RNA sequence: GGGAACGACUCGAGUAGAGUCGAAAAGGCGCUCGUGACGCACCCCAAGCCGGAUAGGACUUUGACGCUGGUGUUCGCGUGGGCUUGUGGGCCGCCAGCCCAGACUAGGGUUAUGUUCGCGCCGCUACAUUCCUACGUAGUUCGCUACGUAGGAAUGAAAAGAAACAACAACAACAAC
Reactivity to 2A3 in 0.01 (KOAc 150mM, MgCl2 10mM, bicine 150mM(pH8.5), 24C), signal-to-noise 5, nucleotides 027 to 126: g010g000c040g010c040u120c100g160u110g060a040c030g010c040a050c010c000c000c000a010a000g000c010c020g110g080a160u160a210g080g050a120c040u150u110u260g070a050c060g020c140u090g010g100u100g100u150u150c040g000c040g110u150g070g010g010c000u050u050g040u210g030g020g000c020c020g010c000c010a010g000c000c000c000a050g070a120c100u180a120g060g010g010u140u080a150u180g060u090u090c040g000c010g010c030c010g000c000u030a040
Reactivity to DMS in 0.01 (KOAc 150mM, MgCl2 10mM, bicine 150mM(pH8.5), 24C), signal-to-noise 7, nucleotides 027 to 126: g000g000c010g020c040u000c130g020u010g010a050c070g010c130a120c030c010c020c030a040a050g010c010c000g020g020a170u020a110g000g010a070c070u000u000u000g010a110c170g010c060u000g000g020u010g010u010u000c050g030c080g030u000g010g010g000c020u000u000g020u010g030g000g010c300c020g010c080c080a100g000c020c010c010a110g000a110c190u010a120g000g000g020u000u010a060u010g010u000u000c120g020c040g000c270c020g010c110u010a120